Source: RMDB library OK2TRN, as collected in RNAgym.
An RNA of 177 nucleotides, treated with DMS and 2A3 and read out base by base.
For DMS the reverse transcriptase was MarathonRT.
RNA sequence: GGGAACGACUCGAGUAGAGUCGAAAACAACCCUCUCCUCUGGUUUGCUAAUUUGCUAUAACAGCUCACAGAACUCAGGGAAACACACUUACCAGUUUAUUAUAAAGGAUAUAGGUGUGGCUAAGCAUACAAUGGCGAUAUUCGUAUCGCCAUUGUAAAAAGAAACAACAACAACAAC
Reactivity to DMS in 0.01 (KOAc 150mM, MgCl2 10mM, bicine 150mM(pH8.5), 24C), signal-to-noise 2, nucleotides 027 to 126: c090a090a170c040c010c030u000c070u000c030c040u000c030u000g020g010u000u000u010g010c070u020a100a150u020u010u000g020c040u000a090u000a090a100c230a040g010c000u000c130a050c060a080g000a030a080c070u030c070a070g010g000g000a090a090a090c030a030c030a020c010u000u010a050c030c010a220g000u000u000u020a100u040u000a100u020a100a050a070g010g020a180u000a260u010a020g000g020u000g010u000g000g000c120u000a070a080g020c120a130
Reactivity to 2A3 in 0.01 (KOAc 150mM, MgCl2 10mM, bicine 150mM(pH8.5), 24C), signal-to-noise 1, nucleotides 027 to 126: c030a080a080c000c020c000u000c030u030c020c000u070c010u000g020g060u010u070u050g090c040u030a130a210u120u060u180g040c030u030a040u050a300a040c060a050g000c000u010c060a070c010a080g090a090a060c020u040c150a000g000g050g000a010a090a010c010a000c010a000c000u040u030a030c010c010a070g040u140u110u040a140u220u130a150u140a110a100a050g040g000a050u100a000u050a260g000g060u000g000u000g010g020c030u130a110a010g120c010a080
The RNA was probed in 150 mM KOAc, 10 mM MgCl2 and 150 mM bicine (pH 8.5) at 24 C. For DMS, 1,241 sequencing reads were counted.